[RMDB]
RNA sequence: GGGAACGACUCGAGUAGAGUCGAAAAGUAAAGGGCUGCCAUAUUUUCGUCAUGCGUAUGUUAGAGAACGUGCGGCAUCUCGAAGUUCAGUUGCUGGCAGAUGACUACGGCGACUGUAUUGCCGUGCGCUCGCAUUAUUAUUCGUAAUAAUGCGAGCAAAAGAAACAACAACAACAAC
Reactivity to 2A3 in 0.01 (KOAc 150mM, MgCl2 10mM, bicine 150mM(pH8.5), 24C), signal-to-noise 5, nucleotides 027 to 126: g070u090a050a080a040g060g030g010c020u020g030c020c020a040u060a090u100u120u030u070c020g020u010c010a030u020g010c000g020u050a040u070g050u040u060a070g010a030g040a300a020c020g010u010g020c030g120g030c020a010u040c030u010c040g030a040a010g060u120u100c050a040g010u050u050g090c020u020g010g000c020a020g040a170u140g060a050c030u060a020c050g000g000c010g030a030c050u090g060u190a150u020u120g010c010c000g000u000g030c040
Reactivity to DMS in 0.01 (KOAc 150mM, MgCl2 10mM, bicine 150mM(pH8.5), 24C), signal-to-noise 6, nucleotides 027 to 126: g010u000a070a090a110g000g010g020c020u000g010c020c030a050u000a060u000u010u010u000c030g010u000c080a050u000g020c060g030u010a050u000g010u000u000a170g010a150g020a050a080c030g020u000g010c010g010g020c010a030u000c060u000c050g010a060a080g010u010u000c100a080g020u000u010g010c090u000g010g000c090a040g000a130u000g000a130c050u000a030c020g000g000c010g020a040c110u010g010u010a280u000u000g010c010c010g010u000g010c130